This 177-nucleotide RNA was probed chemically with 2A3 and DMS. Conditions: 150 mM KOAc, 10 mM MgCl2 and 150 mM bicine (pH 8.5), 24 C. DMS adducts were read by reverse transcription with MarathonRT. The 2A3 profile rests on 1,927 reads.

RNA sequence: GGGAACGACUCGAGUAGAGUCGAAAAGAUAUGGACGUACGAUUCGUCGAUAAGACGGUGUCGGAAACGACACCCGUCUUUUGACGACGGGUACGUCCUAAGUCAAACCAGCUCUUCGGAGCUGGAAUCCUAAUUCCGGGUUCGCCCGGAAUUAGGAAAAAGAAACAACAACAACAAC
Reactivity to 2A3 in 0.01 (KOAc 150mM, MgCl2 10mM, bicine 150mM(pH8.5), 24C), signal-to-noise 1, nucleotides 027 to 126: g020a010u030a000u100g000g000a000c010g010u000a000c020g180a300u070u170c000g010u000c020g060a120u120a300a020g020a000c040g000g000u030g000u000c000g040g000a070a030a000c000g000a010c000a000c040c000c000g010u010c030u020u000u030u110g170a070c020g010a020c020g120g030g020u000a020c010g000u020c000c000u000a000a000g010u000c000a040a010a090c030c000a020g040c000u000c020u040u180c300g210g000a000g020c000u010g000g000a010a060
Reactivity to DMS in 0.01 (KOAc 150mM, MgCl2 10mM, bicine 150mM(pH8.5), 24C), signal-to-noise 1, nucleotides 027 to 126: g000a030u000a300u010g000g000a000c020g040u010a020c010g010a300u000u010c000g050u000c000g000a020u010a010a010g010a020c000g000g020u010g010u000c030g010g000a080a150a190c000g010a030c000a030c060c070c040g010u000c000u000u020u000u000g000a080c050g020a010c200g000g000g000u030a020c010g000u000c000c000u000a000a090g000u000c030a110a120a200c000c000a010g010c000u000c000u010u020c300g070g000a010g010c000u010g000g000a070a050